The record gives the reactivity of an RNA of 207 nucleotides to 2A3 and DMS. The RNA was probed in 150 mM KOAc, 10 mM MgCl2 and 150 mM bicine (pH 8.5) at 24 C. For 2A3, 6,627 sequencing reads were counted. 2A3 adducts were read by reverse transcription with SuperScript II with manganese. Reactivities are given for positions 27 through 156. For DMS the reverse transcriptase was MarathonRT.
RNA sequence: GGGAACGACUCGAGUAGAGUCGAAAAGGGGUCAGGCUUAAGUAAGCUUGGAUUUAGUGCCUGGAGUAUACUGAAGCCUCCACGGUAUACGUUGAAAGGCACUUGUCAGCUUACGAGAGCCUGACGGAGGCACCCAAAAUGAGCGUUCGCGCUCAAACAUACAGUUCCAGUUCGCUGGAACUGUAUGAAAAGAAACAACAACAACAAC
Reactivity to 2A3 in 0.01 (KOAc 150mM, MgCl2 10mM, bicine 150mM(pH8.5), 24C), signal-to-noise 5, nucleotides 027 to 156: g080g000g040g010u010c010a000g000g000c030u040u020a060a010g000u010a000a000g010c040u120u290g090g020a070u220u280u180a000g000u000g000c000c000u010g030g010a020g010u000a000u000a010c010u020g090a150a050g030c020c040u060c050c030a020c000g000g010u000a000u000a010c010g050u090u080g040a060a040a000g000g000c000a000c000u000u000g000u000c020a000g000c000u000u000a000c000g010a020g000a000g010c000c000u000g000a000c010g000g010a010g000g020c020a040c000c000c000a000a110a010a110u100g000a000g000c010g030u080u140c270g050c000g010c090u020c020a000a030a000
Reactivity to DMS in 0.01 (KOAc 150mM, MgCl2 10mM, bicine 150mM(pH8.5), 24C), signal-to-noise 2, nucleotides 027 to 156: g000g020g010g030u010c000a010g020g000c000u000u010a040a300g000u000a040a030g000c000u020u010g010g020a110u000u000u000a020g040u000g000c000c000u010g000g010a300g040u000a010u000a070c000u000g000a090a120g000c050c040u000c030c030a280c000g060g000u000a010u020a000c000g000u000u000g010a090a100a070g000g020c010a010c010u000u010g010u000c030a050g030c010u000u000a060c050g030a300g000a040g020c000c000u000g000a020c020g010g020a100g050g030c060a190c040c050c030a030a030a110a170u000g000a030g000c010g030u010u000c110g000c040g000c000u010c000a000a080a270